[RMDB]
RNA sequence: GGGAACGACUCGAGUAGAGUCGAAAACUCACACGGGUCAUGCUAUCAAUAAGAUUUUGAAAGAUUUCGUUGUGAAGAGUAGAAUUGCGUUGGGAUAUAGAGUACUCUUCCGUCCUGGAUGGGAUUAGCUAAUAGGCAUAUUCGUAUGCCUAUUAGCAAAAGAAACAACAACAACAAC
Reactivity to DMS in 0.01 (KOAc 150mM, MgCl2 10mM, bicine 150mM(pH8.5), 24C), signal-to-noise 6, nucleotides 027 to 126: c020u000c010a060c090a090c030g020g010g010u010c010a100u000g020c070u010a090u000c050a060a070u010a120a100g010a090u000u010u010u000g010a100a100a140g000a050u010u000u000c040g010u010u000g030u000g000a030a030g010a030g010u000a040g020a080a100u010u000g010c080g030u010u000g010g020g000a110u010a110u010a090g000a150g010u000a040c030u000c020u000u000c020c070g010u000c020c030u000g020g000a090u010g010g010g010a080u000u010a120
Reactivity to 2A3 in 0.01 (KOAc 150mM, MgCl2 10mM, bicine 150mM(pH8.5), 24C), signal-to-noise 5, nucleotides 027 to 126: c000u010c000a020c000a010c010g030g000g000u030c020a040u130g050c050u060a040u200c040a050a070u120a170a080g070a170u040u090u140u160g100a090a060a050g070a040u060u120u170c040g000u020u130g050u050g050a020a020g020a010g020u050a020g050a260a150u110u120g060c100g140u180u200g120g040g020a030u100a000u050a180g120a010g070u010a030c000u000c000u020u010c000c030g020u050c010c030u090g080g090a100u120g040g000g040a030u070u090a020
This 177-nucleotide RNA was probed chemically with DMS and 2A3. The RNA was probed in 150 mM KOAc, 10 mM MgCl2 and 150 mM bicine (pH 8.5) at 24 C. Reactivities are given for positions 27 through 126.